[RMDB]
RNA sequence: GGGAACGACUCGAGUAGAGUCGAAAAGUCGGUAUGCCAGCAUGGCUGGGUCGCCUGGUAGACCCACGCCCGAACCGUGUUCGUCGACGGCCGGGCCUGCUGCGACCGCGUCGUGAACAGUGGCGCACGACCCUCCUCGUCGUGCUGCUCGAUCCGGGCAUUAGACAAAGUUCGCUUUGUCUAAUGCAAAAGAAACAACAACAACAAC
Reactivity to DMS in 0.01 (KOAc 150mM, MgCl2 10mM, bicine 150mM(pH8.5), 24C), signal-to-noise 1, nucleotides 027 to 156: g010u010c020g030g000u000a040u000g040c030c020a050g040c010a060u000g010g040c000u000g030g030g000u010c020g030c080c040u010g040g020u010a070g000a040c000c060c010a050c080g000c010c000c060g030a090a050c050c030g000u000g000u000u020c130g000u000c050g000a030c000g020g010c040c000g040g020g000c010c040u020g020c000u010g010c010g010a080c020c000g030c050g010u000c040g020u010g000a090a110c050a130g020u000g030g030c080g030c010a050c010g010a040c000c010c050u000c080c020u000c120g020u000c020g020u000g000c010u010g010c010u000c090g010a300u010c040c020g000g020
Reactivity to 2A3 in 0.01 (KOAc 150mM, MgCl2 10mM, bicine 150mM(pH8.5), 24C), signal-to-noise 3, nucleotides 027 to 156: g130u110c020g010g010u060a060u200g060c160c040a010g000c010a070u170g120g020c110u070g060g050g000u010c010g020c020c090u140g070g060u120a030g020a030c020c040c000a010c040g010c020c000c030g020a040a020c010c000g000u010g060u110u160c180g090u100c060g120a020c010g000g030c020c010g000g010g000c030c020u010g010c020u000g000c010g010a020c000c010g000c010g050u140c030g050u050g050a100a030c040a110g050u080g110g000c010g000c020a000c000g000a010c000c010c000u060c000c040u050c050g010u010c020g000u000g000c120u170g010c030u030c050g020a060u040c050c010g040g050